Source: RMDB library OK3TST, as collected in RNAgym. Chemical mapping of a 207-nucleotide RNA with DMS and 2A3. The reactions ran in a buffer of 150 mM KOAc, 10 mM MgCl2 and 150 mM bicine (pH 8.5), at 24 C. Reactivities are given for positions 27 through 156.

[RMDB]
RNA sequence: GGGAACGACUCGAGUAGAGUCGAAAAACUCUCACCAGGUACGGUACUGUACCUGAUUCUCGAGGAGUAGUGUCCGAGACUCAGGACACGAGUCUCGCUAGUACUGAACUAGCAGUACUCCUGGAGUACAGUACCGUACUCCAGCGAGAGUGAGAGAGUAGUAUCAGGCAUUCGUGCCUGAUACUACAAAAGAAACAACAACAACAAC
Reactivity to DMS in 0.01 (KOAc 150mM, MgCl2 10mM, bicine 150mM(pH8.5), 24C), signal-to-noise 1, nucleotides 027 to 156: a090c020u000c000u000c000a040c000c020a150g000g000u040a000c010g000g010u000a020c040u000g010u000a060c030c030u030g020a080u000u000c080u010c000g020a080g010g020a060g040u000a100g020u000g000u000c010c000g090a100g010a060c060u000c080a290g020g050a280c060a100c040g000a040g000u000c010u000c040g000c020u010a030g010u000a300c000u040g000a190a060c010u000a060g020c020a120g000u000a080c000u000c000c010u000g010g000a060g010u010a000c000a070g020u000a040c020c010g000u000a000c000u000c000c050a060g000c040g010a040g010a050g000u000g000a030g010a110g010a170
Reactivity to 2A3 in 0.01 (KOAc 150mM, MgCl2 10mM, bicine 150mM(pH8.5), 24C), signal-to-noise 3, nucleotides 027 to 156: a000c000u000c000u000c000a010c000c040a010g000g000u000a010c000g000g030u030a010c020u020g000u030a010c010c060u040g070a130u130u050c050u030c010g150a030g000g000a020g000u070a030g010u030g040u110c050c030g030a060g050a080c080u060c110a040g150g020a100c030a020c100g000a020g010u000c030u030c040g020c000u000a000g000u040a130c120u190g070a230a030c010u010a020g020c000a010g030u020a010c010u010c000c000u050g110g010a030g020u000a000c000a000g000u010a010c000c010g000u000a000c000u010c000c010a040g040c080g060a080g000a010g020u010g000a000g000a010g000a020